Annotation: An RNA of 207 nucleotides, treated with 2A3 and DMS and read out base by base. High 2A3 reactivity points to a flexible backbone, as in loops and unpaired stretches. 2A3 adducts were read by reverse transcription with SuperScript II with manganese. The data come from the RNA Mapping Database (RMDB), library RNAMAK. The RNA was probed in 150 mM KOAc, 10 mM MgCl2 and 150 mM bicine (pH 8.5) at 24 C. For 2A3, 1,298 sequencing reads were counted. DMS adducts were read by reverse transcription with MarathonRT.
RNA sequence: GGGAACGACUCGAGUAGAGUCGAAAACCGUAGGCUCCGUAAAGAGUGUCGAUGAGGAUUGUAGGGCGGAAAUAUAAUUCGAAAGAGUUAUAUGGGCCUACUCGAUUCCGACACGGAGCCUAAACGGAAAAGGCUGUGCUGUUCGCAGCACAGCCAACUGAAGUGACUGAUUCGUCAGUCACUUCAGAAAAGAAACAACAACAACAAC
Reactivity to 2A3 in 0.01 (KOAc 150mM, MgCl2 10mM, bicine 150mM(pH8.5), 24C), signal-to-noise 2, nucleotides 027 to 156: c000c000g020u010a000g000g000c010u020c000c000g080u080a030a190a200g300a110g060u030g000u000c020g050a140u160g080a020g020g020a090u080u090g010u060a040g010g050g200c050g050g000a000a010a000u000a000u000a000a010u000u000c010g020a080a060a100g010a040g000u000u000a020u000a010u030g040g070g070c010c000u000a000c000u000c010g030a050u050u020c060c000g000a010c010a000c010g000g000a000g010c000c000u000a000a010a000c040g020g010a070a140a090a160g010g000c000u010g000u000g000c000u010g050u110u110c300g000c090a000g000c010a000c000a000g040c010c010a010a010
Reactivity to DMS in 0.01 (KOAc 150mM, MgCl2 10mM, bicine 150mM(pH8.5), 24C), signal-to-noise 1, nucleotides 027 to 156: c010c000g080u000a070g000g000c000u010c000c020g050u010a040a200a090g030a220g030u000g000u000c000g000a130u020g030a100g020g010a200u000u000g030u000a050g000g020g040c020g050g000a130a070a040u000a000u000a000a000u000u000c000g000a250a200a270g000a090g020u000u000a010u020a040u000g010g040g010c010c000u000a000c010u000c020g010a230u010u000c030c010g050a240c230a060c030g000g000a020g020c030c000u040a000a000a030c000g000g000a040a100a160a210g010g010c020u000g050u000g000c000u020g000u000u010c300g020c040a060g000c000a060c000a000g000c020c000a010a010